[RMDB]
RNA sequence: GGGAACGACUCGAGUAGAGUCGAAAAUUUCUACACUUGUCAAACAAGUGUUAGACUUGCUUAAUAAGGGUAUGCAACUUUUGCAUACAAAGGUCUCCUGGGCUGGUUCUAAAAUCAUUGCUGUUAUAUGCUAGCCACUUCGGUGGCUAGAAAAGAAACAACAACAACAAC
Reactivity to 2A3 in 0.01 (KOAc 150mM, MgCl2 10mM, bicine 150mM(pH8.5), 24C), signal-to-noise 3, nucleotides 027 to 129: u000u020u000c000u000a000c000a000c010u030u030g010u060c050a000a160a110c020a040a040g000u010g010u000u020a010g010a000c000u000u020g040c080u100u150a080a020u230a160a130g060g180g000u090a020u050g020c020a000a210c130u170u120u190u060g000c030a030u000a010c040a030a030a000g020g000u000c000u000c010c000u020g000g000g000c020u030g020g010u120u000c040u090a080a040a010a110u110c010a110u080u170g020c070u040g040u140u020a190u040a020u180g010
Reactivity to DMS in 0.01 (KOAc 150mM, MgCl2 10mM, bicine 150mM(pH8.5), 24C), signal-to-noise 4, nucleotides 027 to 129: u000u000u030c000u020a050c030a000c020u000u030g000u050c230a030a020a090c000a000a090g130u020g010u050u000a050g130a140c200u010u010g020c060u040u000a050a080u000a220a040g050g060g000u040a000u070g040c050a030a170c280u050u040u070u020g000c020a070u100a020c030a080a040a070g040g040u020c070u030c000c020u020g050g000g070c100u030g000g060u020u010c100u010a080a050a080a060u020c130a110u030u050g000c040u000g000u000u070a080u010a140u080g060
Source information
The record gives the reactivity of an RNA of 170 nucleotides to 2A3 and DMS. The reactions ran in a buffer of 150 mM KOAc, 10 mM MgCl2 and 150 mM bicine (pH 8.5), at 24 C. DMS adducts were read by reverse transcription with MarathonRT. For 2A3 the reverse transcriptase was SuperScript II with manganese. Reactivities are given for positions 27 through 129. For DMS, 4,628 sequencing reads were counted. It was measured as part of the RMDB library 15KLIB.